The record gives the reactivity of an RNA of 177 nucleotides to DMS and 2A3. For 2A3 the reverse transcriptase was SuperScript II with manganese.

RNA sequence: GGGAACGACUCGAGUAGAGUCGAAAAGGCGUCUUCGCUGCCUCGGCCGCCGUGCACUGACCGGUAGCCGCCGUAAUGGCGGCAUUGUUCCCAUAAAUGGAUGUGGGUGUGGGUGACGAAGUAGCAGCGGUCGCUGCUACUUCGGUAGCAGCGACCGAAAAGAAACAACAACAACAAC
Reactivity to DMS in 0.01 (KOAc 150mM, MgCl2 10mM, bicine 150mM(pH8.5), 24C), signal-to-noise 1, nucleotides 027 to 126: g000g000c090g000u010c040u000u010c070g030c010u000g020c020c040u000c040g020g000c050c000g020c020c030g030u010g050c020a060c080u000g010a080c040c040g000g000u010a130g020c010c010g000c010c010g000u000a120a100u010g020g030c000g000g030c020a030u010u010g000u000u000c000c000c000a090u010a080a080a110u010g010g020a060u020g020u000g030g010g020u010g000u000g020g000g010u000g020a120c010g000a020a030g000u000a030g000c030a100g000
Reactivity to 2A3 in 0.01 (KOAc 150mM, MgCl2 10mM, bicine 150mM(pH8.5), 24C), signal-to-noise 1, nucleotides 027 to 126: g050g030c050g090u070c020u170u070c090g010c030u020g000c000c010u000c030g030g060c070c000g000c010c010g090u070g070c010a020c100u110g110a060c000c010g010g000u040a030g000c010c010g000c000c010g080u130a160a160u150g010g020c000g030g030c000a000u020u130g000u040u000c000c000c000a000u060a020a200a020u080g050g000a040u080g110u180g130g000g000u060g050u020g050g000g020u010g020a000c000g000a050a020g040u100a040g050c020a000g070